[RMDB]
This 177-nucleotide RNA was probed chemically with DMS and 2A3. For 2A3 the reverse transcriptase was SuperScript II with manganese. For 2A3, 6,361 sequencing reads were counted. Source: RMDB library M2PK50, as collected in RNAgym. The reactions ran in a buffer of 150 mM KOAc, 10 mM MgCl2 and 150 mM bicine (pH 8.5), at 24 C.

RNA sequence: GGGAACGACUCGAGUAGAGUCGAAAACAGCUACGUUUCGACGUAGCUGAAAAUAAAACAGGCAAGUACCAGCCUGAAAAAGGUACAAAGAUCCAAAGAUCAAAACGGUUCGAUUCGUCGAACCGAAACGUAUAACACACUUCGGUGUGUUAUACGUAAAAGAAACAACAACAACAAC
Reactivity to DMS in 0.01 (KOAc 150mM, MgCl2 10mM, bicine 150mM(pH8.5), 24C), signal-to-noise 2, nucleotides 027 to 126: c010a010g010c000u000a000c000g000u000u000u040c140g020a050c000g010u010a000g000c000u000g020a000a020a020a080u000a110a040a120a120c200a030g010g020c000a050a170g020u000a020c000c010a140g000c000c010u000g000a010a020a020a050a030g060g000u000a000c000a090a090a080g000a020u000c020c130a110a150a120g000a040u000c010a050a050a090a120c030g000g010u000u000c000g020a020u000u040c190g000u000c010g000a010a010c010c000g000a020a030
Reactivity to 2A3 in 0.01 (KOAc 150mM, MgCl2 10mM, bicine 150mM(pH8.5), 24C), signal-to-noise 4, nucleotides 027 to 126: c000a000g000c010u010a000c000g030u010u050u180c240g050a020c010g010u000a010g000c000u000g010a000a000a000a010u130a020a080a020a030c110a010g000g000c010a080a090g000u000a010c000c010a000g020c000c000u000g020a030a000a000a000a000g000g000u000a010c030a010a110a040g010a020u030c060c090a250a070a030g020a010u020c000a030a040a030a090c020g010g010u000u000c000g000a010u000u050c170g060u000c000g070a000a000c000c000g010a010a030